RNA sequence: GGGAACGACUCGAGUAGAGUCGAAAAGGCGAUAAGUGCCUACACACCUUGGGCAAUUCUCCCCUCGGUCAUCGGAUUCUGGAUAACCCUUCAGUACACAAAGAGAGGAGGUGUUCUUUGGGACACAGUUCCAUUUUGUAUUCGUACAAAAUGGAACAAAAGAAACAACAACAACAAC
Reactivity to 2A3 in 0.01 (KOAc 150mM, MgCl2 10mM, bicine 150mM(pH8.5), 24C), signal-to-noise 9, nucleotides 027 to 126: g020g010c030g040a050u130a240a110g090u130g170c000c010u090a010c060a000c000a010c020c000u030u040g020g000g000c040a060a140u170u030c010u020c020c010c000c000u020c020g080g020u050c030a090u090c050g090g020a100u110u010c010u070g030g030a070u090a170a140c010c020c000u030u040c020a040g040u090a050c070a000c040a110a150a010g070a020g020a030g030g020a030g020g010u030g010u020u020c000u060u090u110g060g010g030a030c040a000c010a110
Reactivity to DMS in 0.01 (KOAc 150mM, MgCl2 10mM, bicine 150mM(pH8.5), 24C), signal-to-noise 5, nucleotides 027 to 126: g000g010c030g010a180u040a040a120g020u020g020c030c000u020a120c130a120c090a100c030c010u010u020g020g020g020c090a070a060u020u000c010u000c010c000c000c020u010c040g010g000u030c090a070u020c060g000g000a120u010u000c050u010g010g000a070u020a120a100c070c050c040u020u000c020a040g010u010a060c140a090c120a090a060a080g000a060g000a070g000g000a040g000g000u000g010u000u000c000u010u020u020g010g010g010a110c070a060c110a110
Record summary
The record gives the reactivity of an RNA of 177 nucleotides to 2A3 and DMS. The DMS profile rests on 11,417 reads. 2A3 adducts were read by reverse transcription with SuperScript II with manganese.